Chemical mapping of a 177-nucleotide RNA with DMS and 2A3. DMS adducts were read by reverse transcription with MarathonRT. The data come from the RNA Mapping Database (RMDB), libraries RFM100 and RFMREP. Reactivities are rounded to 0.1 and cut off at 0 and 3.
RNA sequence: GGGAACGACUCGAGUAGAGUCGAAAAUACUAGCUAUUUUGUGAGUUCCUCGGGCACUAUCAAAAACACAUGCCCAAUAAAGAAAGUCAAUAGCGACGUUAGGAGAGCCUAGCGGUCUAUUGACUUUACUACUGAUACUAUUCGUAGUAUCAGUAGUAAAAGAAACAACAACAACAAC
Reactivity to DMS in 0.01 (KOAc 150mM, MgCl2 10mM, bicine 150mM(pH8.5), 24C), signal-to-noise 9, nucleotides 027 to 126: u000a020c030u040a130g010c160u000a000u000u000u000u000g010u010g020a260g010u000u000c000c000u010c250g000g010g030c000a020c180u010a110u030c180a060a090a060a090a080c230a100c300a180u000g000c000c000c000a110a050u050a050a090a110g000a050a030a020g010u000c000a000a010u010a000g000c240g010a160c020g010u000u000a000g000g010a300g010a180g010c020c000u000a000g010c000g010g010u020c000u000a000u000u000g000a010c000u000u000u000
Reactivity to 2A3 in 0.01 (KOAc 150mM, MgCl2 10mM, bicine 150mM(pH8.5), 24C), signal-to-noise 9, nucleotides 027 to 126: u060a010c070u050a040g110c040u020a050u050u050u030u050g170u050g110a110g030u010u000c010c000u040c050g000g000g020c020a020c050u130a090u270c160a110a080a080a100a030c090a030c010a100u040g000c000c000c020a010a020u150a020a040a030g200a030a040a000g000u000c000a000a000u010a000g030c100g120a140c010g030u000u000a010g030g060a220g030a050g300c000c000u000a000g000c000g010g030u010c000u000a000u000u000g000a000c000u000u000u000